This 207-nucleotide RNA was probed chemically with DMS and 2A3. High 2A3 reactivity points to a flexible backbone, as in loops and unpaired stretches. The data come from the RNA Mapping Database (RMDB), library OK3TST. For DMS, 2,804 sequencing reads were counted. For 2A3, 1,276 sequencing reads were counted.
[RMDB]
RNA sequence: GGGAACGACUCGAGUAGAGUCGAAAAGCGGGACGGGAUUUGAAGACCGUAGAAGUCAAUUGCAGUUUGGUGAAAGGAGGGCAUAAAUUGUUGAACUUGAUUUGUCUUAAUGCAAUGUAACUUGUUCCUCAUCUAUCUCAGAAAAUUGCUGCUAAUGGUGUUACCAGAGAUUCGUCUCUGGUAACACAAAAGAAACAACAACAACAAC
Reactivity to DMS in 0.01 (KOAc 150mM, MgCl2 10mM, bicine 150mM(pH8.5), 24C), signal-to-noise 2, nucleotides 027 to 156: g010c050g000g000g010a080c060g010g010g040a100u010u000u000g020a070a100g020a070c010c120g030u000a060g020a060a060g010u020c010a060a080u010u000g040c100a040g030u010u000u000g000g030u010g020a030a120a130g000g010a110g020g000g050c050a160u000a080a110a110u000u000g040u000u000g000a080a110c030u010u020g030a230u000u000u000g020u000c050u000u000a070a120u000g000c010a010a050u000g000u000a070a060c080u000u020g000u000u010c010c000u000c030a070u000c030u000a130u000c030u000c040a140g000a060a060a110a110u000u010g000c010u010g000c020u000a140a170u000g050
Reactivity to 2A3 in 0.01 (KOAc 150mM, MgCl2 10mM, bicine 150mM(pH8.5), 24C), signal-to-noise 3, nucleotides 027 to 156: g000c030g000g020g030a020c030g030g000g050a130u130u020u110g050a080a020g010a020c020c010g010u000a020g020a050a000g030u000c000a000a010u070u030g010c000a010g000u030u080u090g080g000u030g020a050a010a020g020g010a030g000g020g040c020a030u100a050a060a080u090u030g000u020u040g060a080a110c050u050u030g070a110u080u020u170g100u050c020u090u190a080a070u110g020c000a030a020u060g010u110a020a100c050u030u020g030u080u150c000c000u000c020a060u010c030u100a090u010c020u010c040a010g160a050a040a010a060u150u120g030c000u020g030c020u140a070a100u220g060